[RMDB]
RNA sequence: GGGAACGACUCGAGUAGAGUCGAAAAGUCCAUGCCCGCAGCGUAUGUCCAAUUGGCGACGCCGUCGGGCAGGCGCGCCUGGUUCGAACGCCGGCCGAGCACCGAGCUGGACGCUUGCGGCUGUACCCCUACAAAUGGCUUUCGAGCCAUUUGUAGGAAAAGAAACAACAACAACAAC
Reactivity to DMS in 0.01 (KOAc 150mM, MgCl2 10mM, bicine 150mM(pH8.5), 24C), signal-to-noise 3, nucleotides 027 to 126: g030u010c020c050a130u010g020c030c000c000g010c030a050g010c010g010u000a040u000g030u010c010c050a300a230u000u000g010g040c030g000a040c020g010c010c010g010u010c020g020g000g030c020a010g000g010c110g040c070g030c010c020u010g030g010u000u000c030g000a110a080c080g000c010c030g000g010c170c080g010a110g010c030a110c150c000g000a050g010c010u000g000g000a040c040g000c020u010u000g030c090g000g000c000u010g000u000a160c050c030
Reactivity to 2A3 in 0.01 (KOAc 150mM, MgCl2 10mM, bicine 150mM(pH8.5), 24C), signal-to-noise 3, nucleotides 027 to 126: g020u020c030c000a040u050g000c020c020c030g000c010a020g000c010g010u040a130u220g070u060c040c030a300a300u210u300g000g010c000g010a020c010g030c000c010g150u270c030g010g000g000c010a000g000g000c020g010c030g020c020c010u040g040g010u010u050c010g020a080a030c110g010c020c020g120g070c070c060g050a080g000c000a030c050c030g020a030g000c030u050g020g010a020c010g000c000u060u150g040c070g020g000c010u000g010u050a060c000c020
The record gives the reactivity of an RNA of 177 nucleotides to DMS and 2A3. DMS adducts were read by reverse transcription with MarathonRT. The reactions ran in a buffer of 150 mM KOAc, 10 mM MgCl2 and 150 mM bicine (pH 8.5), at 24 C. The data come from the RNA Mapping Database (RMDB), library OK2TST.